Structure probing data (DMS and 2A3) for a 207-nucleotide construct. Source: RMDB library RNAMAK, as collected in RNAgym. The reactions ran in a buffer of 150 mM KOAc, 10 mM MgCl2 and 150 mM bicine (pH 8.5), at 24 C. The DMS profile rests on 2,336 reads. The 2A3 profile rests on 2,595 reads.
RNA sequence: GGGAACGACUCGAGUAGAGUCGAAAACGCUGGGAGAAUUAAGCUAUGGAGAUGCAAACAGCGAUGAGUACUGAAGCGCGCACGGUACGAGCUGGUAGCAUCGUUGAAAUAGCUUAAUUCUCCUGUGCUGAAGCGCGCACGGCAACCGAAAGGUGCGGUUAGCACCUACGUUCGCGUAGGUGCUAACAAAAGAAACAACAACAACAAC
Reactivity to DMS in 0.01 (KOAc 150mM, MgCl2 10mM, bicine 150mM(pH8.5), 24C), signal-to-noise 1, nucleotides 027 to 156: c070g020c040u000g000g010g020a010g030a090a010u010u000a030a060g000c010u000a020u000g010g020a080g030a040u000g030c030a060a110a300c020a000g000c010g010a140u000g030a300g000u000a030c010u000g010a040a050g030c000g000c020g040c000a300c040g020g000u000a010c000g000a080g040c000u030g000g010u000a300g010c010a000u000c010g010u010u010g000a080a090a050u010a010g000c000u010u000a010a010u010u010c000u000c000c000u000g000u000g020c000u010g030a080a080g020c030g050c010g020c000a170c040g040g000c010a110a160c030c010g010a080a090a170g000g010u000g030c020g010
Reactivity to 2A3 in 0.01 (KOAc 150mM, MgCl2 10mM, bicine 150mM(pH8.5), 24C), signal-to-noise 2, nucleotides 027 to 156: c060g020c040u120g050g010g000a000g000a010a000u000u020a010a000g000c010u000a010u020g040g010a050g010a020u000g000c010a150a270a240c000a020g010c000g170a280u090g080a020g030u000a010c010u040g020a300a060g010c000g000c010g020c010a000c020g010g010u000a010c010g010a060g010c000u000g010g000u020a000g010c000a010u010c000g020u040u020g010a000a000a000u000a010g000c000u000u000a000a000u000u000c010u000c000c000u000g000u020g010c010u050g020a020a000g000c000g020c000g000c000a000c000g040g000c040a070a100c020c020g040a100a020a010g000g020u050g010c020g070